[RMDB]
RNA sequence: GGGAACGACUCGAGUAGAGUCGAAAAUAUCUAUAGCUAGGAUUGUAUAGAGGGUAGUCGCAGUCACCCCAACUCCGACUUGUGGAUACAAUCUUUGAUUUCAUUCAUAAGUAAGGUGAGAAACAACCCCCCUAUGGUAUUUCGAUACCAUAGGGGGAAAAGAAACAACAACAACAAC
Reactivity to 2A3 in 0.01 (KOAc 150mM, MgCl2 10mM, bicine 150mM(pH8.5), 24C), signal-to-noise 3, nucleotides 027 to 126: u040a010u020c000u000a060u080a080g120c060u100a130g040g110a280u080u120g020u040a030u000a070g090a120g050g010g030u050a040g050u050c070g000c070a020g010u070c010a070c000c000c000c000a000a000c040u050c050c000g010a020c000u000u000g010u050g040g000a000u000a010c030a000a030u000c000u030u070u300g030a020u010u010u000c020a000u000u000c030a040u060a080a010g040u010a140a170g060g000u060g060a120g080a030a070a000c020a010a050c000
Reactivity to DMS in 0.01 (KOAc 150mM, MgCl2 10mM, bicine 150mM(pH8.5), 24C), signal-to-noise 2, nucleotides 027 to 126: u030a040u000c020u030a070u000a040g010c030u000a020g010g000a040u000u010g000u030a030u000a050g010a130g000g030g010u010a020g000u010c030g020c260a060g000u000c120a070c000c000c040c040a080a060c050u000c030c000g000a010c010u000u020g010u000g000g000a000u000a110c140a000a020u000c010u010u010u020g000a020u000u010u010c150a010u000u000c030a030u020a020a010g010u000a090a070g060g010u000g020a140g000a140a060a110c110a120a060c060